The data come from the RNA Mapping Database (RMDB), library OK2TST. Chemical mapping of a 177-nucleotide RNA with 2A3 and DMS. For DMS, 1,292 sequencing reads were counted. For 2A3, 1,456 sequencing reads were counted. The RNA was probed in 150 mM KOAc, 10 mM MgCl2 and 150 mM bicine (pH 8.5) at 24 C. 2A3 adducts were read by reverse transcription with SuperScript II with manganese. Values cover nucleotides 27 to 126.

RNA sequence: GGGAACGACUCGAGUAGAGUCGAAAAACAAGCGAUUGACCUGUCAGCAAAUGGCAACACGAUGAAAAGUUAUGUCAGCGACUCUAACAGUAGCGUCACACCGAGUAUUCAGUCUGUUAGCUGGACAACACCUAGCCGUAUUCGUACGGCUAGGUGUAAAAGAAACAACAACAACAAC
Reactivity to 2A3 in 0.01 (KOAc 150mM, MgCl2 10mM, bicine 150mM(pH8.5), 24C), signal-to-noise 2, nucleotides 027 to 126: a000c060a020a010g040c020g110a090u000u110g000a170c000c010u010g030u050c030a010g060c070a040a120a120u040g020g000c020a020a030c010a020c140g050a070u120g030a070a000a000a110g020u070u050a090u200g050u020c060a020g000c020g050a010c040u020c020u040a100a070c050a060g060u120a010g060c010g090u050c050a010c020a040c060c000g020a010g020u040a080u050u090c000a000g050u020c020u020g110u120u060a020g040c030u060g000g040a000c000a020
Reactivity to DMS in 0.01 (KOAc 150mM, MgCl2 10mM, bicine 150mM(pH8.5), 24C), signal-to-noise 2, nucleotides 027 to 126: a080c070a020a050g000c110g000a110u000u000g010a080c070c020u000g010u000c060a100g010c080a070a090a080u000g010g000c040a040a030c080a080c120g000a100u040g020a070a040a090a050g000u000u000a180u010g010u000c090a060g010c030g000a060c000u010c030u000a030a050c120a060g020u000a050g010c050g020u000c020a090c110a080c070c000g000a100g050u010a070u000u000c040a100g040u000c020u000g000u000u000a100g000c020u000g000g000a020c130a070